Structure probing data (DMS and 2A3) for a 177-nucleotide construct.
RNA sequence: GGGAACGACUCGAGUAGAGUCGAAAACAAUUAGCUUCCGACUCAUUCAUCCAAAUACCGAGUCGCCAAAAUUCAAACUAGACUCGUUAAAUGAAUGAAUGAUGCGGUAGACAAAUUGGAUCAUUGAACUUGUACAUAUAUUCGUAUAUGUACAAGUAAAAGAAACAACAACAACAAC
Reactivity to DMS in 0.01 (KOAc 150mM, MgCl2 10mM, bicine 150mM(pH8.5), 24C), signal-to-noise 9, nucleotides 027 to 126: c010a020a020u000u000a180g010c020u000u000c010c000g010a060c040u000c000a010u000u000c010a010u000c020c000a010a030a300u000a020c060c000g000a000g010u000c000g020c210c230a050a060a100a070u020u040c250a090a100a120c210u020a080g000a010c000u000c000g010u000u000a000a030a240u000g000a030a010u000g000a010a010u000g000a000u000g010c010g000g000u000a010g010a060c040a040a030a020u000u000g000g000a110u000c100a090u010u010g000a160
Reactivity to 2A3 in 0.01 (KOAc 150mM, MgCl2 10mM, bicine 150mM(pH8.5), 24C), signal-to-noise 9, nucleotides 027 to 126: c000a000a040u050u040a040g020c000u040u000c010c010g140a180c020u000c000a000u010u000c000a000u000c010c000a010a010a010u020a020c030c010g010a000g000u010c010g020c030c020a120a120a030a040u220u230c080a090a070a060c040u090a060g000a000c000u000c000g010u010u010a010a020a020u020g010a010a000u000g000a000a000u010g000a020u080g000c000g000g000u010a000g090a040c020a010a050a020u020u020g040g030a060u100c080a170u080u160g050a050
The data come from the RNA Mapping Database (RMDB), libraries RFM100 and RFMREP. For DMS the reverse transcriptase was MarathonRT.